[RMDB]
RNA sequence: GGGAACGACUCGAGUAGAGUCGAAAAUGUUGAACUCUCGCAGCGUGCCGCAGGCGCUCAGCGAUAGGGCGAUAACGAUGGCGGUAAUGAUCUUCUUCAUGGUGUGUUCCUAUUGGUUGGUGAGUUCAUAUUGAAGUAAAGAUAAGAAUAUAUCAACCAUAGGUAUAAUAUUCGUAUUAUACCUAUGAAAAGAAACAACAACAACAAC
Reactivity to 2A3 in 0.01 (KOAc 150mM, MgCl2 10mM, bicine 150mM(pH8.5), 24C), signal-to-noise 5, nucleotides 027 to 156: u110g020u030u060g020a050a030c010u010c000u030c070g020c050a050g010c010g040u010g070c020c020g040c050a050g080g000c010g000c000u030c050a050g030c050g070a070u130a120g020g020g020c020g020a060u040a140a020c050g050a070u100g090g010c080g000g000u070a120a090u100g090a040u030c030u130u000c010u040u030c090a040u070g030g030u050g020u020g020u070u060c020c000u040a090u050u130g050g000u020u020g030g000u040g030a080g010u010u020c000a000u040a070u100u060g050a080a030g050u130a160a050a050g030a040u090a080a010g020a140a010u160a010u020a010u150c010a040a010c020
Reactivity to DMS in 0.01 (KOAc 150mM, MgCl2 10mM, bicine 150mM(pH8.5), 24C), signal-to-noise 4, nucleotides 027 to 156: u010g000u000u010g020a090a090c030u000c020u010c030g060c040a100g020c000g030u000g030c040c060g040c050a150g010g020c010g020c020u000c040a110g030c070g010a110u010a130g020g000g050c030g010a160u000a080a090c060g020a090u000g010g010c040g010g030u000a070a070u020g010a070u000c050u000u000c020u000u000c010a060u010g020g020u010g030u000g000u000u000c010c010u000a120u000u000g030g030u000u010g020g050u000g010a170g030u010u000c030a100u010a080u000u000g000a070a120g010u000a100a120a280g010a070u000a040a120g020a080a090u000a140u010a060u010c030a030a090c050